[RMDB]
RNA sequence: GGGAACGACUCGAGUAGAGUCGAAAAUUGAACGCAUCGGCGGCCCAUCCAUCAUUCUCUGCAGAUGCGCGAGCAAACGGGGCGAGAUCGAACUCGCAGUUUGACAUGUCUAACGAUGGGAAUUAUACACAGGUACUUUGUUCGCAAAGUACCUGUGAAAAGAAACAACAACAACAAC
Reactivity to 2A3 in 0.01 (KOAc 150mM, MgCl2 10mM, bicine 150mM(pH8.5), 24C), signal-to-noise 2, nucleotides 027 to 126: u040u060g040a110a030c010g020c000a020u000c060g070g000c010g070g020c040c000c000a020u010c010c020a140u140c020a060u090u070c070u010c030u110g030c010a000g020a020u010g000c000g010c100g050a060g000c020a040a000a020c090g050g100g250g000c040g010a010g010a040u210c130g060a090a130c000u000c000g000c020a000g000u000u000u050g060a080c060a070u110g040u030c040u080a120a040c080g000a000u010g000g010g020a020a020u200u060a080u070a070
Reactivity to DMS in 0.01 (KOAc 150mM, MgCl2 10mM, bicine 150mM(pH8.5), 24C), signal-to-noise 2, nucleotides 027 to 126: u000u010g000a140a090c080g000c010a010u010c010g000g030c030g010g030c000c000c000a030u000c060c210a120u000c110a130u000u000c050u000c010u000g030c020a030g030a020u000g000c000g030c110g010a100g010c010a020a010a030c030g040g020g000g050c020g010a010g010a150u000c210g010a130a120c000u010c000g050c010a100g010u000u010u000g000a110c080a090u000g010u000c120u000a070a070c150g010a020u000g000g030g000a160a070u030u000a040u020a160